About this RNA: An RNA of 177 nucleotides, treated with 2A3 and DMS and read out base by base. The DMS profile rests on 954 reads. High 2A3 reactivity points to a flexible backbone, as in loops and unpaired stretches. Conditions: 150 mM KOAc, 10 mM MgCl2 and 150 mM bicine (pH 8.5), 24 C. 2A3 adducts were read by reverse transcription with SuperScript II with manganese. Source: RMDB library OK2TST, as collected in RNAgym.
RNA sequence: GGGAACGACUCGAGUAGAGUCGAAAAGUACUAUGGUCGGUGGCUAUGAGAACGUCCAUGGUAGUGAUGGCUGUAGUUCUCCUCUUGGCAGGCGCACCUCUCAGGGCAACCCCGGUAGUACCGGUGGAGGCCCUACAGUCUUCGGACUGUAGGGCCUAAAAGAAACAACAACAACAAC
Reactivity to 2A3 in 0.01 (KOAc 150mM, MgCl2 10mM, bicine 150mM(pH8.5), 24C), signal-to-noise 1, nucleotides 027 to 126: g000u010a010c060u050a030u100g050g000u030c060g000g060u070g120g000c000u050a140u290g050a020g050a150a000c000g030u060c030c050a050u050g120g000u080a050g070u050g080a100u070g070g030c030u040g020u100a020g040u060u000c000u020c020c000u030c020u030u160g100g030c020a040g030g070c050g020c040a040c020c050u000c000u040c010a070g040g000g000c000a030a080c040c000c000c050g040g030u070a120g040u020a080c000c000g020g010u100g040g070
Reactivity to DMS in 0.01 (KOAc 150mM, MgCl2 10mM, bicine 150mM(pH8.5), 24C), signal-to-noise 1, nucleotides 027 to 126: g000u000a070c060u000a030u010g000g020u000c020g040g030u000g010g010c030u000a030u000g000a060g030a060a140c040g030u000c000c000a020u000g000g000u010a010g000u000g000a120u000g020g020c080u010g010u010a100g000u000u000c030u000c030c040u000c050u000u000g010g010c070a100g010g000c090g010c100a090c080c030u010c010u000c060a120g000g000g000c130a060a140c020c010c000c030g000g010u000a110g030u000a300c000c030g000g000u010g030g000